[RMDB]
RNA sequence: GGGAACGACUCGAGUAGAGUCGAAAAGCCCGCACGGCACCGGAGCCGGGGACCCAACCGAGAACUUUGGGGUGAAUCGGCCUCACCGCCCUCGACGCGAGGACGGUCCGCCGUAGGGCAAACCUUCAACACGUCUAAUUUUCGAAUUAGACGUGUUAAAAGAAACAACAACAACAAC
Reactivity to DMS in 0.01 (KOAc 150mM, MgCl2 10mM, bicine 150mM(pH8.5), 24C), signal-to-noise 5, nucleotides 027 to 126: g020c010c000c000g000c160a050c000g000g000c010a060c240c140g010g010a060g000c000c020g000g000g000g010a170c020c000c010a080a090c200c100g000a160g000a130a140c150u010u020u010g010g000g020g000u030g020a180a070u000c020g000g000c000c010u020c100a110c010c010g010c020c000c000u010c000g030a180c210g010c100g000a010g000g000a030c000g010g010u010c190c120g000c000c000g030u000a160g000g000g000c020a020a060a110c020c010u030u030c110
Reactivity to 2A3 in 0.01 (KOAc 150mM, MgCl2 10mM, bicine 150mM(pH8.5), 24C), signal-to-noise 9, nucleotides 027 to 126: g000c000c000c000g020c100a010c000g000g010c010a030c050c130g060g010a020g000c000c000g000g000g010g030a030c010c010c010a030a050c080c070g160a080g050a250a130c100u120u120u150g040g020g010g010u050g050a060a040u030c000g010g000c000c010u060c020a020c000c010g010c000c020c000u020c010g290a300c120g050c140g140a000g000g010a010c000g000g010u040c020c060g000c000c000g000u000a010g000g000g000c000a030a020a050c000c000u060u110c030
An RNA of 177 nucleotides, treated with DMS and 2A3 and read out base by base.